An RNA of 207 nucleotides, treated with 2A3 and DMS and read out base by base.
The DMS profile rests on 3,985 reads.
Reactivities are given for positions 27 through 156.
The data come from the RNA Mapping Database (RMDB), library RNAMAK.
The reactions ran in a buffer of 150 mM KOAc, 10 mM MgCl2 and 150 mM bicine (pH 8.5), at 24 C.
[RMDB]
RNA sequence: GGGAACGACUCGAGUAGAGUCGAAAACGCGGAUUCGUCCGCGGAGCUGAUAUGGAAAGAAUCGUCAAUGAUGUAAACUACCCACCGACGCUCGGAAACGAGCGUCGAGGUUUAUUGAGACGUUCUUUCCUAAGUCUACCAGACAGUUCGCUGUCAACCUACCAGUUGUAUUCGUACAACUGGUAGGAAAAGAAACAACAACAACAAC
Reactivity to 2A3 in 0.01 (KOAc 150mM, MgCl2 10mM, bicine 150mM(pH8.5), 24C), signal-to-noise 7, nucleotides 027 to 156: c000g000c000g000g010a020u060u070c220g080u030c100c010g010c030g000g010a020g030c130u070g010a010u020a040u110g010g010a000a000a010g040a030a080u300c120g020u010c030a210a300u090g020a020u060g040u050a030a040a000c060u160a090c100c040c060a080c060c010g000a000c000g000c000u000c000g000g020a020a040a020c000g000a000g000c000g000u000c000g000a000g000g000u000u010u010a030u020u060g050a040g000a000c000g000u000u000c000u000u000u010c000c000u000a000a000g000u000c010u030a020c020c030a010g020a010c000a000g010u080u140c180g030c120u030g000u050c020a060a080
Reactivity to DMS in 0.01 (KOAc 150mM, MgCl2 10mM, bicine 150mM(pH8.5), 24C), signal-to-noise 2, nucleotides 027 to 156: c000g030c000g010g000a050u000u010c300g020u000c000c000g030c040g030g000a040g060c020u000g000a030u000a130u010g010g010a000a030a020g000a030a020u000c100g040u010c020a140a100u000g000a140u000g000u000a000a010a000c010u010a010c010c000c020a300c140c000g010a030c010g000c010u010c010g040g000a080a070a100c040g030a030g010c000g010u030c020g000a020g010g000u010u000u000a040u000u000g010a110g030a020c000g000u000u000c010u000u000u000c000c000u010a000a100g020u010c020u000a000c010c010a130g000a080c020a020g020u000u020c120g050c000u000g020u000c020a110a180